[RMDB]
RNA sequence: GGGAACGACUCGAGUAGAGUCGAAAAGGCAAGACCAAUGGCCGAAGAGGGAGGAAAAAGCGAGCGAAUGGACGUGACGCCAUCGCUAGCUUGAUGUCAAGAACAUCAAACAUUUGAGCGCAGCUCACACCCCUGGGAGGGGGGUGACGUCACGGGAGCAUUACCUGAUGUUCGCAUCAGGUAAUGCAAAAGAAACAACAACAACAAC
Reactivity to 2A3 in 0.01 (KOAc 150mM, MgCl2 10mM, bicine 150mM(pH8.5), 24C), signal-to-noise 2, nucleotides 027 to 156: g050g000c030a050a000g010a040c010c040a050a130u160g030g010c020c000g020a030a010g040a020g020g020g030a020g000g090a020a030a030a010a070g010c030g020a010g000c000g040a200a170u000g000g010a000c010g000u000g010a000c000g000c000c000a000u010c020g030c010u000a010g000c000u010u000g000a000u020g010u020c090a140a060g060a170a030c010a000u020c020a000a060a070c080a120u110u090u080g020a030g020c300g000c250a060g000c020u010c000a020c000a010c010c000c010c010u040g030g050g000a070g020g010g000g000g010g010u000g020a020c010g000u010c010a000c000g000g000g020a080